RNA sequence: GGGAACGACUCGAGUAGAGUCGAAAAUUCCUUAAGACAGCUCAUCGGUGCUGAUGCUUGAGGUUGUGUUUGACGGGCACACAUUGAUCUCUGCAAUUUAAUGCGUGGUGGCUGACAUUUCCAUGCAGCCUCAACACUGAUUCGUCAGUGUUGAGGCAAAAGAAACAACAACAACAAC
Reactivity to DMS in 0.01 (KOAc 150mM, MgCl2 10mM, bicine 150mM(pH8.5), 24C), signal-to-noise 2, nucleotides 027 to 126: u030u020c020c010u000u000a090a060g010a170c040a040g030c010u000c040a090u000c150g030g040u000g040c040u000g070a080u000g020c020u000u000g000a060g010g000u000u000g030u030g000u000u050u000g000a140c070g060g000g020c010a060c030a070c050a080u010u040g020a060u020c010u040c040u050g000c080a080a080u020u000u010a060a090u020g020c000g000u010g030g020u000g010g010c040u030g010a120c100a100u000u000u010c010c030a030u010g010c080a140
Reactivity to 2A3 in 0.01 (KOAc 150mM, MgCl2 10mM, bicine 150mM(pH8.5), 24C), signal-to-noise 4, nucleotides 027 to 126: u040u020c000c000u000u060a060a010g040a030c010a000g000c020u060c100a150u120c180g110g020u100g000c040u020g020a060u080g030c010u050u080g020a020g020g000u030u030g000u030g050u050u030u090g080a050c050g050g020g000c030a010c000a000c010a070u070u180g060a070u060c010u010c020u070g000c010a040a030u010u200u210a200a060u130g010c010g000u020g010g000u040g000g050c020u010g010a030c020a080u060u060u000c030c010a020u090g020c020a020